Chemical mapping of a 177-nucleotide RNA with DMS and 2A3. The DMS profile rests on 44,231 reads. The 2A3 profile rests on 22,958 reads.

RNA sequence: GGGAACGACUCGAGUAGAGUCGAAAAAUGCAGUUGAUGCUGCCGAACACUGCGGAACAGUUGCAAAUGGUGUGCUACAAACAUUCAUGAGGAUGGCUUGGGGAGGAAGUUACAUUGCACUUGACUCACAACAAUAAACAUUCGUGUUUAUUGUUGUAAAAGAAACAACAACAACAAC
Reactivity to DMS in 0.01 (KOAc 150mM, MgCl2 10mM, bicine 150mM(pH8.5), 24C), signal-to-noise 9, nucleotides 027 to 126: a090u020g010c040a020g010u000u010g010a080u020g010c030u000g010c030c060g000a110a100c130a060c040u010g000c050g010g000a110a100c110a080g010u010u020g010c080a060a070a090u000g010g020u010g020u010g000c040u010a070c130a070a080a070c100a040u010u010c070a090u020g000a100g010g000a060u010g000g010c080u010u010g000g000g000g000a070g000g010a030a050g010u010u010a070c110a070u010u000g000c050a080c070u010u010g000a110c080u010c100
Reactivity to 2A3 in 0.01 (KOAc 150mM, MgCl2 10mM, bicine 150mM(pH8.5), 24C), signal-to-noise 9, nucleotides 027 to 126: a000u120g000c010a010g020u080u090g100a130u190g020c020u040g010c000c000g020a060a010c080a010c070u080g010c030g060g020a090a070c030a070g040u100u070g060c040a030a080a140u110g040g020u040g030u050g060c020u100a080c070a050a160a020c020a050u100u210c020a030u170g070a040g100g000a040u050g040g020c050u030u050g010g010g000g010a040g020g010a030a000g000u010u010a040c040a070u040u090g020c030a030c040u040u090g050a060c010u030c040
The reactions ran in a buffer of 150 mM KOAc, 10 mM MgCl2 and 150 mM bicine (pH 8.5), at 24 C.